[RMDB]
RNA sequence: GGGAACGACUCGAGUAGAGUCGAAAACUCAGAGUGUGACACAGACAGACAGUCUCUGACACUGUGUCUCAGUCACUCAGUGAGACACACUGACUGACUCAGUGUCUCUCUGUGUGACAGAGAGACAUGCACGAUAAACUUUCGAGUUUAUCGUGCAAAAAGAAACAACAACAACAAC
Reactivity to 2A3 in 0.01 (KOAc 150mM, MgCl2 10mM, bicine 150mM(pH8.5), 24C), signal-to-noise 4, nucleotides 027 to 126: c010u030c030a050g060a040g120u160g010u070g060a010c020a010c010a060g090a040c010a010g100a070c070a080g210u050c020u000c010u060g040a050c020a020c090u010g020u010g010u030c000u010c000a000g010u000c000a000c010u020c000a000g010u010g040a070g020a030c050a010c000a010c150u030g040a010c040u110g070a040c050u030c060a020g010u000g000u040c000u000c000u000c000u000g020u000g070u090g060a010c000a010g030a000g010a000g010a010c010a040
Reactivity to DMS in 0.01 (KOAc 150mM, MgCl2 10mM, bicine 150mM(pH8.5), 24C), signal-to-noise 6, nucleotides 027 to 126: c020u000c020a180g010a110g020u000g020u000g000a070c030a040c090a010g010a110c020a080g010a100c210a200g000u010c070u000c060u000g000a130c150a050c020u000g000u000g020u000c000u000c040a060g000u000c010a010c050u000c010a020g010u000g010a090g000a080c160a130c020a080c090u000g000a040c130u000g000a080c130u000c100a070g010u000g000u000c000u000c000u000c000u000g010u000g000u000g010a040c000a020g010a050g010a020g020a010c030a060